An RNA of 177 nucleotides, treated with DMS and read out base by base. The reactions ran in a buffer of 150 mM KOAc, 10 mM MgCl2 and 150 mM bicine (pH 8.5), at 24 C. DMS adducts were read by reverse transcription with MarathonRT.

[RMDB]
RNA sequence: GGGAACGACUCGAGUAGAGUCGAAAAGAAUGGCGAAAGCGAGGAGCUCCGGGUGGAUAUUUUUUCCCUGAACGUUCCGCAGGAAGCAUCCUUCGCGGGACCUGCACCGUGUUGGAUGCAUAAAGAAUCAUAUGAUGCGGUUCGCCGCAUCAUAUGAAAAAGAAACAACAACAACAAC
Reactivity to DMS in 0.01 (KOAc 150mM, MgCl2 10mM, bicine 150mM(pH8.5), 24C), signal-to-noise 1, nucleotides 027 to 126: g010a120a060u020g000g010c020g030a090a090a070g010c050g000a110g000g000a150g010c030u010c030c000g000g000g020u020g010g050a030u010a000u000u000u000u000u000u000c030c010c010u000g000a070a220c090g010u000u010c010c000g020c150a140g000g010a150a130g000c000a030u000c000c000u000u000c030g030c000g010g000g000a060c020c030u010g000c030a050c030c000g000u010g010u000u000g000g000a020u000g000c030a030u000a030a090a040g000a130a140